Conditions: 150 mM KOAc, 10 mM MgCl2 and 150 mM bicine (pH 8.5), 24 C.
Chemical mapping of a 177-nucleotide RNA with 2A3 and DMS.
RNA sequence: GGGAACGACUCGAGUAGAGUCGAAAAGAAAGAAAAGUUGUAUUUUGAGUCUGUAACUGAAUCAAAAGUGAAUCAAAACGUGAACAUCCAAACUACAUUUUGUGUGCUUGUGGAUAACUUCAACCAAGAACACAAUGCAGUUCGCUGCAUUGUGUUCAAAAGAAACAACAACAACAAC
Reactivity to 2A3 in 0.01 (KOAc 150mM, MgCl2 10mM, bicine 150mM(pH8.5), 24C), signal-to-noise 1, nucleotides 027 to 126: g030a000a010a040g060a050a100a000a020g030u010u000g070u010a110u060u030u040u020g010a030g040u010c020u200g040u100a110a100c190u070g080a000a040u030c000a130a220a000a000g040u070g050a100a010u010c060a030a000a000a110c000g090u140g020a020a000c000a000u000c000c000a030a030a030c000u050a020c010a040u050u130u130u120g160u000g060u000g020c080u090u000g080u040g160g000a000u110a110a000c010u050u020c060a000a030c040c000a050a090
Reactivity to DMS in 0.01 (KOAc 150mM, MgCl2 10mM, bicine 150mM(pH8.5), 24C), signal-to-noise 2, nucleotides 027 to 126: g000a090a040a060g010a070a020a110a100g020u020u000g000u010a170u000u010u000u000g010a020g020u000c030u000g010u040a080a120c200u040g010a030a030u000c040a050a000a000a010g000u040g000a060a030u010c080a050a080a050a120c170g000u020g000a040a030c120a060u000c060c000a100a050a100c080u000a000c010a050u010u080u000u030g010u000g000u000g010c100u000u000g000u030g000g020a020u010a050a100c090u000u000c070a100a110c040c090a020a090
For 2A3, 814 sequencing reads were counted. Source: RMDB libraries RFM100 and RFMREP, as collected in RNAgym.